[RMDB]
RNA sequence: GGGAACGACUCGAGUAGAGUCGAAAAGUAUUCGUUCGACAGAAGAUUAAUGAACAACCUAUUAUGAAAGCCCUAUCCCUAGUGAUUAGCCUAGUCGUGAUUAGCGUGGUGGUGAUUAUUAUCCCACAUAGAUAGAAUGCUUCGGCAUUCUAUCUAUAAAAGAAACAACAACAACAAC
Reactivity to 2A3 in 0.01 (KOAc 150mM, MgCl2 10mM, bicine 150mM(pH8.5), 24C), signal-to-noise 9, nucleotides 027 to 126: g050u040a130u050u130c070g020u020u030c030g070a040c070a070g120a110a020g020a160u110u140a120a060u220g040a040a020c020a020a050c010c030u090a100u250u070a100u260g140a090a060a030g020c000c000c000u020a040u050c000c000c000u020a020g040u010g140a100u050u080a040g020c000c010u010a020g030u050c020g060u050g040a110u030u090a020g040c040g010u030g030g020u020g010g030u060g080a010u010u100a060u080u080a050u050c000c010c000a040c010
Reactivity to DMS in 0.01 (KOAc 150mM, MgCl2 10mM, bicine 150mM(pH8.5), 24C), signal-to-noise 8, nucleotides 027 to 126: g020u010a070u010u010c100g020u010u000c030g030a130c150a110g000a110a120g010a130u010u020a060a070u020g010a070a090c090a090a090c060c030u010a060u010u010a070u010g010a070a080a130g000c020c010c020u000a080u000c010c020c010u020a040g020u010g010a080u000u010a070g010c040c010u010a030g010u010c030g000u010g000a080u010u020a060g000c060g020u000g010g020u010g000g000u020g010a070u010u010a060u020u010a140u000c000c000c000a070c130